[RMDB]
RNA sequence: GGGAACGACUCGAGUAGAGUCGAAAAUAGUGGUGUUGUCACUCAAUAUCAAGAAGAUGAAGAUAUUGGUGUGAUUUCUGAUGAAAAAGACGAUACCGUUAAAGUACAACAGAAAAAUGUAUAACAGGAGACGUAGUGUUUUCGAACACUACGUCUCAAAAGAAACAACAACAACAAC
Reactivity to DMS in 0.01 (KOAc 150mM, MgCl2 10mM, bicine 150mM(pH8.5), 24C), signal-to-noise 2, nucleotides 027 to 126: u000a070g010u000g000g020u010g010u000u000g000u010c010a100c000u010c000a020a010u000a000u020c030a090a110g030a170a130g030a190u010g000a240a210g020a010u000a010u000u000g020g010u020g030u000g000a120u000u010u020c030u010g010a080u030g010a070a100a010a160a130g010a020c020g000a090u010a020c100c060g000u000u000a010a080a140g030u020a060c010a000a130c100a060g000a000a030a040a030a090u000g000u010a070u000a140a140c190a130g020
Reactivity to 2A3 in 0.01 (KOAc 150mM, MgCl2 10mM, bicine 150mM(pH8.5), 24C), signal-to-noise 2, nucleotides 027 to 126: u120a000g040u020g000g010u000g000u060u070g020u030c000a010c010u010c000a000a010u020a010u000c060a100a140g100a090a020g160a290u170g080a080a040g010a020u060a000u010u000g100g000u110g000u000g090a000u030u070u010c030u080g200a190u100g040a010a010a010a010a000g030a000c080g050a050u050a000c000c050g000u030u010a150a050a020g020u000a050c030a100a040c010a120g270a170a120a020a000a020u100g050u080a100u060a240a070c040a020g210

An RNA of 177 nucleotides, treated with DMS and 2A3 and read out base by base. Reactivities are given for positions 27 through 126. Reactivities are rounded to 0.1 and cut off at 0 and 3. The reactions ran in a buffer of 150 mM KOAc, 10 mM MgCl2 and 150 mM bicine (pH 8.5), at 24 C. The data come from the RNA Mapping Database (RMDB), library OK2TST. High DMS reactivity at an A or C suggests that its Watson-Crick edge is free.